[RMDB]
RNA sequence: GGGAACGACUCGAGUAGAGUCGAAAACGAGGGGUACAAUCCGUAUGGCCAACAACUGGCGCGUACGUAAAGUCUCCUUUCUCGAUGGUCCAUACCUUAGAUGCGUUAGCAUUAAUCAGGCAACGGCUCUCUAGAUAGAGCCCUCAACCGGAGUUUGCUGUGAACCGGAGUUCGCUCCGGUUCACAGAAAAGAAACAACAACAACAAC
Reactivity to 2A3 in 0.01 (KOAc 150mM, MgCl2 10mM, bicine 150mM(pH8.5), 24C), signal-to-noise 1, nucleotides 027 to 156: c070g010a000g000g030g000g050u280a040c020a030a050u000c030c010g000u010a000u000g000g030c030c000a040a080c060a110a090c300u070g010g000c130g000c030g150u000a000c010g050u080a000a000a060g020u010c020u030c020c000u010u100u030c040u020c030g030a050u060g030g040u080c060c060a080u120a160c060c020u060u060a020g000a040u010g000c000g120u100u240a030g000c000a010u010u040a050a090u130c070a030g000g030c040a090a000c010g010g000c000u000c010u050c040u070a090g010a230u100a010g000a090g000c000c000c010u070c020a050a060c050c010g050g020a060g040u020u120u130g020
Structure probing data (2A3) for a 207-nucleotide construct.
The 2A3 profile rests on 742 reads.
2A3 adducts were read by reverse transcription with SuperScript II with manganese.
Source: RMDB library PDB130, as collected in RNAgym.
Values are in units of 0.01, from 0 to 300, in steps of 10.
Values cover nucleotides 27 to 156.
The RNA was probed in 150 mM KOAc, 10 mM MgCl2 and 150 mM bicine (pH 8.5) at 24 C.